The record gives the reactivity of an RNA of 177 nucleotides to DMS.
It was measured as part of the RMDB library TTRINS.
The RNA was probed in 150 mM KOAc, 10 mM MgCl2 and 150 mM bicine (pH 8.5) at 24 C.
The DMS profile rests on 1,240 reads.
RNA sequence: GGGAACGACUCGAGUAGAGUCGAAAAGAUAUGGAUUUACAUUAGACGUCACAGUAUCGUAGACCUAAAUCGGAAACGAUUUAGGUCUACGCCGAGCUGUGUCGUCGACGAUGUAAAUCCUAAGUCACGGAAUAUAGUGGUUCGCCACUAUAUUCCGAAAAGAAACAACAACAACAAC
Reactivity to DMS in 0.01 (KOAc 150mM, MgCl2 10mM, bicine 150mM(pH8.5), 24C), signal-to-noise 2, nucleotides 027 to 126: g000a030u000a300u010g040g010a040u000u020u000a020c010a010u010u000a300g010a010c000g020u000c000a030c010a010g000u000a160u000c010g030u010a010g000a020c000c010u010a000a010a020u010c000g010g010a050a100a260c000g020a000u000u000u010a010g020g010u000c010u000a000c000g010c300c190g010a210g000c000u000g000u000g000u010c000g010u020c010g000a050c300g000a020u000g000u000a000a010a010u000c010c000u000a000a070g010u010c030a270